[RMDB]
RNA sequence: GGGAACGACUCGAGUAGAGUCGAAAAUAUACAUCAGAAGUCGGCACAACUCCCGACUCGCGGUGAGCGAUGCAGCGUAGCGCGAGCUACGCAGCUGCUGUGCGGAUGGCUAGCCAGAGCUAGCCUAGCAUACGGUGGCGUUCGCGCCACCGUAUGCAAAAGAAACAACAACAACAAC
Reactivity to DMS in 0.01 (KOAc 150mM, MgCl2 10mM, bicine 150mM(pH8.5), 24C), signal-to-noise 1, nucleotides 027 to 126: u000a060u040a170c090a050u020c040a120g040a160a040g000u000c000g060g000c180a240c120a120a160c290u020c050c010c000g000a040c000u000c070g060c300g020g050u000g000a170g110c020g000a050u000g010c050a050g020c010g080u000a000g000c000g000c300g000a270g040c000u000a000c030g020c000a000g010c000u000g000c070u000g000u000g020c000g010g000a020u110g000g000c000u000a000g000c000c140a000g020a110g010c000u000a000g040c000c000u020a000
Reactivity to 2A3 in 0.01 (KOAc 150mM, MgCl2 10mM, bicine 150mM(pH8.5), 24C), signal-to-noise 1, nucleotides 027 to 126: u040a000u040a080c060a130u090c020a010g100a260a000g120u010c000g050g230c050a000c000a070a300c170u020c000c000c000g000a000c000u000c000g030c000g010g000u010g000a110g030c120g230a240u130g090c100a000g000c000g000u020a000g000c000g000c010g020a000g000c000u000a000c000g000c000a000g000c000u040g000c000u010g090u200g010c040g030g070a070u150g040g000c020u000a000g010c000c070a070g000a020g030c000u000a000g000c000c000u000a000